Chemical mapping of a 207-nucleotide RNA with 2A3. Conditions: 150 mM KOAc, 10 mM MgCl2 and 150 mM bicine (pH 8.5), 24 C. It was measured as part of the RMDB library OK3TST. Values cover nucleotides 27 to 156.
[RMDB]
RNA sequence: GGGAACGACUCGAGUAGAGUCGAAAAGGCGUUAGUCAUGGACCCGGCGAGUAAGAGCGUGAACUUUGCGCGUGAGGCGGCCCGGCGUCCCGUCGCCAUGUCGGCAAGUGGGGAAAGUGGUAAAGUCCUUACGCACGAAUCCGUUGAUAUGCGUACCUAUCGUCCAGAGAUUCGUCUCUGGACGAUAAAAAGAAACAACAACAACAAC
Reactivity to 2A3 in 0.01 (KOAc 150mM, MgCl2 10mM, bicine 150mM(pH8.5), 24C), signal-to-noise 1, nucleotides 027 to 156: g080g000c020g030u090u100a040g010u110c070a020u020g020g040a000c000c160c000g020g000c020g000a090g030u200a170a020g000a020g120c050g000u070g020a080a010c040u050u170u080g010c070g000c000g030u010g030a000g000g050c010g020g000c000c000c010g030g000c040g090u040c000c000c000g040u050c020g000c010c030a090u260g140u110c030g000g030c000a090a090g080u110g050g010g000g020a120a070a080g170u260g000g010u060a190a130a000g060u150c000c000u000u000a010c010g000c000a000c020g040a010a040u080c020c000g070u040u030g000a010u010a040u090g040c000g000u050a100c000c000